This 177-nucleotide RNA was probed chemically with DMS and 2A3.
[RMDB]
RNA sequence: GGGAACGACUCGAGUAGAGUCGAAAAAGCCGUGGUCGUUACGACGACCACGGCAGAUGUUGUGAUGAGGGCAAAAUGUUCAACUGCUCUGAAUGGGCUGAAUGAAAGUAGCCUUUCUGAACAUCAAAAAUUAACGAAUUUUCGAAUUCGUUAAUUUAAAAGAAACAACAACAACAAC
Reactivity to DMS in 0.01 (KOAc 150mM, MgCl2 10mM, bicine 150mM(pH8.5), 24C), signal-to-noise 8, nucleotides 027 to 126: a070g030c010c020g080u010g020g030u010c010g050u000u010a110c190g040a060c020g040a020c010c010a010c010g000g040c000a000g010a030u000g000u000u000g010u010g010a150u010g000a020g000g000g010c010a020a090a190a160u010g010u000u000c010a050a120c190u020g000c000u000c010u010g020a110a100u030g000g000g020c000u000g000a030a030u010g010a010a020a070g000u000a120g000c000c000u000u010u010c010u000g000a080a020c010a010u010c030a030a080
Reactivity to 2A3 in 0.01 (KOAc 150mM, MgCl2 10mM, bicine 150mM(pH8.5), 24C), signal-to-noise 4, nucleotides 027 to 126: a010g000c000c020g010u010g020g000u020c020g000u020u070a100c300g030a020c000g010a000c160c010a000c010g020g000c000a000g000a010u050g000u040u010g040u010g060a050u020g020a020g020g010g000c000a010a010a040a080u050g020u020u010c040a130a110c160u120g010c000u000c020u070g200a190a200u260g000g000g000c030u020g070a060a040u130g180a060a030a000g040u030a000g000c000c000u030u140u000c010u010g030a000a020c000a010u010c000a020a130

The RNA was probed in 150 mM KOAc, 10 mM MgCl2 and 150 mM bicine (pH 8.5) at 24 C.